[RMDB]
RNA sequence: GGGAACGACUCGAGUAGAGUCGAAAAUAGCUGCCGAGCACAAACAUUGUUUAGCAACGCUGAAGGCAUUGUCGAAUGGGUGCUCUAUAUCAAAGAAGAAAUAUGAUUUCAGCGAAAGGCAUUGAUGUCACGCAUUAGCAUUCGUGCUAAUGCGUGAAAAAGAAACAACAACAACAAC
Reactivity to 2A3 in 0.01 (KOAc 150mM, MgCl2 10mM, bicine 150mM(pH8.5), 24C), signal-to-noise 3, nucleotides 027 to 126: u140a100g050c070u050g010c030c000g010a010g000c000a000c040a070a230a000c040a110u080u000g100u100u170u090a060g000c040a050a060c000g000c000u100g020a030a020g080g000c000a000u000u080g000u080c060g050a010a050u040g070g000g000u010g030c000u000c050u060a160u000a010u070c020a010a110a040g060a160a000g120a010a130a010u190a050u090g060a010u030u030u010c010a000g010c000g060a070a020a000g050g000c040a010u020u210g090a080u120g040
Reactivity to DMS in 0.01 (KOAc 150mM, MgCl2 10mM, bicine 150mM(pH8.5), 24C), signal-to-noise 3, nucleotides 027 to 126: u010a110g040c080u010g010c040c040g000a080g000c050a030c060a100a120a100c110a140u010u040g000u050u010u020a150g000c050a100a150c040g000c000u000g030a020a070g010g000c000a060u000u000g010u040c070g010a070a070u020g000g000g000u030g010c060u010c050u030a050u010a010u000c120a030a090a140g000a140a190g000a080a140a060u000a110u000g000a030u020u000u020c010a030g000c000g020a070a090a070g000g000c060a100u020u000g000a090u050g000